Notes
Structure probing data (DMS and 2A3) for a 170-nucleotide construct. Conditions: 150 mM KOAc, 10 mM MgCl2 and 150 mM bicine (pH 8.5), 24 C. It was measured as part of the RMDB library 15KLIB.
RNA sequence: GGGAACGACUCGAGUAGAGUCGAAAAUUCGAGAGCUCCUGGACUCCUCGGCUCUGGAGUCCUCCGACCCGUGAGGUCGAGGAUCCCCGCGCAGGGAGGCAGCCACCAGGAGAAAGCGGAGAAGUCAGAAGUAGUACCUUCGGGUACUACAAAAGAAACAACAACAACAAC
Reactivity to DMS in 0.01 (KOAc 150mM, MgCl2 10mM, bicine 150mM(pH8.5), 24C), signal-to-noise 6, nucleotides 027 to 129: u030u000c040g000a030g030a090g020c010u010c010c010u000g020g010a190c030u000c010c000u000c030g000g000c000u000c040u010g020g010a030g000u020c010c020u030c080c060g040a040c010c010c010g060u090g020a180g000g000u010c010g000a000g020g020a040u000c000c010c000c040g000c300g000c020a120g070g050g010a010g000g000c160a030g030c050c060a030c020c020a030g000g000a020g000a010a010a030g030c000g000g000a000g020a110a070g000u000c090a060g000a150a120
Reactivity to 2A3 in 0.01 (KOAc 150mM, MgCl2 10mM, bicine 150mM(pH8.5), 24C), signal-to-noise 8, nucleotides 027 to 129: u030u010c010g000a000g000a080g040c000u010c000c010u030g020g070a190c010u000c000c000u020c020g030g000c010u010c020u040g010g000a030g040u010c000c000u000c040c080g000a000c000c000c060g140u240g110a220g000g000u010c000g010a010g000g010a030u040c000c020c000c020g000c000g000c010a040g150g200g030a010g010g000c040a010g050c060c050a090c010c000a000g000g000a010g020a000a000a010g010c020g010g020a040g020a120a040g100u130c080a030g020a190a020